[RMDB]
RNA sequence: GGGAACGACUCGAGUAGAGUCGAAAAGAUAUGGACACCAGAACACUCGUACGAGCUGCCUUCGGAAACGAAGGGCAGCUCGCAAAUGUUCGGUGUCCUAAGUCAAAGGUUCACUUCGGUGAACCAAGUACUAAGUUGGGUUCGCCCAACUUAGUACAAAAGAAACAACAACAACAAC
Reactivity to DMS in 0.01 (KOAc 150mM, MgCl2 10mM, bicine 150mM(pH8.5), 24C), signal-to-noise 3, nucleotides 027 to 126: g010a040u010a300u010g010g010a000c000a010c000c000a270g030a000a010c010a020c170u010c300g010u010a140c010g000a000g010c010u010g010c000c000u010u000c010g010g000a120a110a240c000g000a020a020g000g030g050c000a000g020c000u000c000g000c010a030a110a080u000g010u000u000c000g030g010u000g010u000c000c000u010a010a080g000u000c030a090a150a160g000g030u000u000c010a010c000u000u000c240g030g010u000g000a000a010c000c000a020a060
Reactivity to 2A3 in 0.01 (KOAc 150mM, MgCl2 10mM, bicine 150mM(pH8.5), 24C), signal-to-noise 3, nucleotides 027 to 126: g020a030u050a030u130g000g010a010c020a000c020c090a140g050a040a000c040a010c090u300c240g240u300a260c110g020a000g000c010u020g010c010c000u000u000c030g060g020a080a030a040c020g020a040a030g000g040g020c000a000g290c000u030c000g000c010a010a010a020u050g000u000u010c020g020g000u000g000u000c000c000u000a010a000g010u020c050a060a070a180g000g000u000u000c000a010c030u050u140c300g090g000u010g000a000a000c010c000a010a000